[RMDB]
RNA sequence: GGGAACGACUCGAGUAGAGUCGAAAAGGGAUUGUGGUUCGCCACAAUCCCAAAAAAACCUUUGUGACAUGACAUGACGGUACCCAGCCCAUUGGGCUGGUAUCCGUCAACAGCAUGUCACUCUGGUAAAAAAGAAUGAUAGUUCGCUAUCAUUCAACUCAUAACUCGUAUUCGUACGAGUUAUGAGAAAAGAAACAACAACAACAAC
Reactivity to 2A3 in 0.01 (KOAc 150mM, MgCl2 10mM, bicine 150mM(pH8.5), 24C), signal-to-noise 2, nucleotides 027 to 156: g000g000g000a000u010u000g000u000g040g020u040u050c250g070c110c010a000c010a000a000u000c000c000c000a000a000a000a000a000a000a000c000c000u000u000u000g000u000g000a000c030a000u010g040a020c040a100u030g000a010c070g000g020u020a030c040c000c000a000g000c000c000c020a290u120u300g000g010g020c010u000g010g000u010a000u010c000c010g000u000c000a000a000c010a000g040c000a000u000g000u000c020a000c000u020c000u000g000g000u060a020a110a050a000a000a050g000a010a000u000g000a000u000a000g040u100u130c300g000c170u000a000u000c000a000u010u000c000a000a010
Reactivity to DMS in 0.01 (KOAc 150mM, MgCl2 10mM, bicine 150mM(pH8.5), 24C), signal-to-noise 1, nucleotides 027 to 156: g000g040g050a000u000u000g050u000g040g070u000u010c300g030c000c020a000c000a000a010u000c000c000c000a000a000a050a090a020a020a030c000c000u000u000u000g030u000g000a030c040a020u000g020a040c040a300u020g000a030c020g010g010u000a270c220c000c000a010g000c020c000c020a290u020u010g070g030g010c000u030g000g000u000a040u000c010c010g010u000c000a010a010c080a140g030c010a020u000g000u000c000a010c010u000c010u010g000g040u010a000a040a040a050a070a090g000a000a000u000g050a050u000a000g010u000u010c300g000c010u000a000u000c020a030u010u010c000a100a120